[RMDB]
RNA sequence: GGGAACGACUCGAGUAGAGUCGAAAAGAAAGCGCGAACUGUAGGACCAAGCCUACCUUGGGAAAUGAUCUGCUACAAGAUCGUAGCGAAAGCAUGGCAUACCCAUGAGUAUGAAGCGCGAAAGAAAGGGUAUGAAUGUCUUCGGACAUUCAUACCCAAAAGAAACAACAACAACAAC
Reactivity to 2A3 in 0.01 (KOAc 150mM, MgCl2 10mM, bicine 150mM(pH8.5), 24C), signal-to-noise 2, nucleotides 027 to 126: g060a010a030a000g000c000g020c010g040a070a050c050u110g000u000a010g060g000a010c120c100a090a070g130c010c020u000a000c000c000u000u000g000g000g010a120a140a000u180g000a080u040c020u170g000c050u080a040c020a120a020g130a300u300c090g010u020a000g030c000g030a110a000a000g090c020a000u080g070g000c020a000u100a230c010c020c020a050u040g030a050g010u070a010u140g130a040a010g000c000g000c010g000a000a100a000g170a030a030a000
Reactivity to DMS in 0.01 (KOAc 150mM, MgCl2 10mM, bicine 150mM(pH8.5), 24C), signal-to-noise 2, nucleotides 027 to 126: g040a110a050a160g010c040g000c000g070a180a110c130u010g000u010a000g000g010a140c160c120a130a040g000c010c010u000a030c000c000u000u030g040g000g000a150a060a000u000g000a030u010c050u000g000c120u000a010c140a000a050g000a120u000c110g000u080a050g000c050g000a180a010a050g010c060a040u000g000g000c180a090u030a270c140c000c000a040u000g000a020g000u080a060u090g000a190a270g000c000g000c000g000a040a140a030g010a060a110a110